[RMDB]
RNA sequence: GGGAACGACUCGAGUAGAGUCGAAAAUGCCAGGACAACUUCUGGUCCGGUAACGUGCUGAGCCCGGCCAAACUCCGCGAUAAGUGGACCCAACUCGAAAUCAACCGUAACAAGCAACAGGCAGGCGACCCCUGUUAUAGUUCGCUAUAACAGGGGUAAAAGAAACAACAACAACAAC
Reactivity to DMS in 0.01 (KOAc 150mM, MgCl2 10mM, bicine 150mM(pH8.5), 24C), signal-to-noise 3, nucleotides 027 to 126: u010g010c020c010a100g030g020a050c060a100a100c190u010u010c110u010g010g000u000c060c020g020g030u000a070a110c120g020u010g000c050u010g000a140g020c050c010c000g010g010c050c040a100a060a130c110u000c020c020g020c030g020a130u000a060a100g020u000g030g000a020c030c020c010a100a070c020u000c060g000a040a100a070u010c070a060a070c040c070g000u000a070a080c060a080a060g000c030a030a040c080a070g010g000c060a040g010g010c080g000
Reactivity to 2A3 in 0.01 (KOAc 150mM, MgCl2 10mM, bicine 150mM(pH8.5), 24C), signal-to-noise 1, nucleotides 027 to 126: u070g020c000c010a020g020g010a020c050a100a040c160u150u030c040u130g070g000u020c010c020g000g000u030a060a020c060g080u070g080c030u020g020a030g040c000c020c000g010g050c000c010a050a040a070c030u020c020c000g020c010g060a090u060a290a030g030u020g010g000a000c010c010c000a060a050c030u040c060g100a090a060a090u060c030a030a090c000c020g050u040a010a050c020a100a000g060c000a000a020c000a030g030g010c000a000g000g000c020g070

An RNA of 177 nucleotides, treated with DMS and 2A3 and read out base by base. Conditions: 150 mM KOAc, 10 mM MgCl2 and 150 mM bicine (pH 8.5), 24 C. For 2A3, 2,200 sequencing reads were counted. The DMS profile rests on 2,512 reads. 2A3 is a SHAPE reagent: it acylates the 2'-hydroxyl of flexible nucleotides of all four kinds.